[RMDB]
RNA sequence: GGGAACGACUCGAGUAGAGUCGAAAAACUUCAUAUGGGUUCGAUGUACUUUUAUCUUCAACGAAUAGUCCGGCGUUCAAUGCGGGGCGAAGCAUAUGGUUGCCUGGUUGGUUAAACGCUAUUAAUGCAUACAAGUUGAUUUCGAUCAACUUGUAUGAAAAGAAACAACAACAACAAC
Reactivity to DMS in 0.01 (KOAc 150mM, MgCl2 10mM, bicine 150mM(pH8.5), 24C), signal-to-noise 7, nucleotides 027 to 126: a120c050u000u000c040a050u010a070u000g010g010g010u000u000c030g010a120u010g010u000a060c160u010u000u010u010a090u010c110u000u000c070a050a090c070g010a050a050u000a090g010u000c020c010g000g020c030g020u000u010c210a080a080u010g020c020g010g010g010g000c010g010a070a070g000c040a030u000a040u000g000g010u000u000g010c020c010u000g010g020u000u000g010g010u000u000a040a060a090c140g010c050u000a090u000u000a060a090u010g010
Reactivity to 2A3 in 0.01 (KOAc 150mM, MgCl2 10mM, bicine 150mM(pH8.5), 24C), signal-to-noise 2, nucleotides 027 to 126: a000c030u090u060c020a040u060a060u110g130g000g030u040u050c010g030a010u040g020u140a130c020u150u260u110u100a110u180c080u040u060c020a070a040c030g060a090a080u000a050g030u010c040c040g120g000c000g030u150u150c110a130a030u140g000c020g000g020g000g020c020g000a030a000g020c000a040u070a070u100g070g010u060u040g030c010c000u030g060g020u090u090g040g000u040u050a090a060a000c040g000c030u020a040u100u180a150a040u160g050